[RMDB]
RNA sequence: GGGAACGACUCGAGUAGAGUCGAAAAACAUCGACCACUCCGGUACGCCGGAGUGGUCGAUGAAUCCAGCAGUAGUCAGCCAUCCGGACAGAACCGUUCCUGUGAUGGUGUUACACUGCUGGGAGAGGAAUGUCUUGUCUUCAUCCGGUUGCCUGCGCCACUGUUCUGGUGGCGUCUGGCACUGGUGCAAGACAGAGCUGUGCUUCCCCGAGAGUGUGCUAAGCAUUCACUUUGGCUGCUUAGUUCUAGUCUGGGAGCAGACAGAAAAACCACAAUUCGUUGUGGUUAAAAGAAACAACAACAACAAC
Reactivity to DMS in 0.01 (KOAc 150mM, MgCl2 10mM, bicine 150mM(pH8.5), 24C), signal-to-noise 3, nucleotides 027 to 266: a170c010a000u000c000g070a000c040c000a070c000u000c090c000g040g050u000a070c120g020c010c000g060g000a080g140u000g030g070u000c000g000a000u000g000a000a000u010c000c020a010g010c020a010g010u000a100g020u010c300a290g010c010c000a000u000c010c000g000g000a030c060a160g010a160a150c290c230g000u010u000c010c030u010g030u010g010a020u000g000g010u000g000u010u020a050c050a030c000u000g010c010u000g010g010g000a090g020a110g000g010a140a110u020g000u000c010u000u010g010u000c040u000u010c050a080u010c000c010g010g010u010u020g020c000c000u000g000c020g000c000c000a020c000u000g000u010u020c210u040g000g030u000g000g010c000g000u000c040u010g000g010c010a010c000u000g000g010u000g000c110a030a000g000a010c020a020g000a110g000c010u000g010u000g010c020u010u020c010c000c020c120g000a050g000a100g010u000g010u000g020c000u000a000a010g000c010a010u020u000c010a160c260u000u010u010g010g010c070u000g000c000u000u000a000g050u000u000c000u000a140g010u010c000u010g000g010g020a080g000c000a050g010a120c010a060g000a110a050a110
Reactivity to 2A3 in 0.01 (KOAc 150mM, MgCl2 10mM, bicine 150mM(pH8.5), 24C), signal-to-noise 1, nucleotides 027 to 266: a030c000a000u010c000g060a000c070c000a000c010u010c000c000g040g000u080a060c210g000c000c000g040g010a000g050u000g010g050u020c000g000a000u000g000a000a000u000c000c000a010g000c000a000g000u130a000g030u040c030a000g020c060c000a000u000c020c000g000g000a010c000a040g190a200a050c060c040g060u250u130c020c040u100g030u080g030a000u000g020g000u000g020u010u010a000c010a010c010u000g010c000u030g010g060g020a020g020a030g100g120a130a050u170g030u020c000u050u020g000u030c090u150u050c070a100u110c000c000g000g040u110u140g000c010c000u010g000c000g010c000c000a040c010u070g080u300u100c200u280g050g000u000g000g010c040g030u060c050u040g000g000c020a000c000u000g000g000u020g000c050a000a000g000a000c010a000g010a000g000c020u020g020u030g020c020u110u170c000c000c000c030g020a030g050a020g120u220g000u010g030c000u020a000a010g000c000a000u040u040c000a060c170u170u250u220g040g030c030u010g000c000u010u000a000g010u010u000c000u000a080g100u000c000u030g000g010g020a030g020c000a080g020a010c000a000g080a060a110a020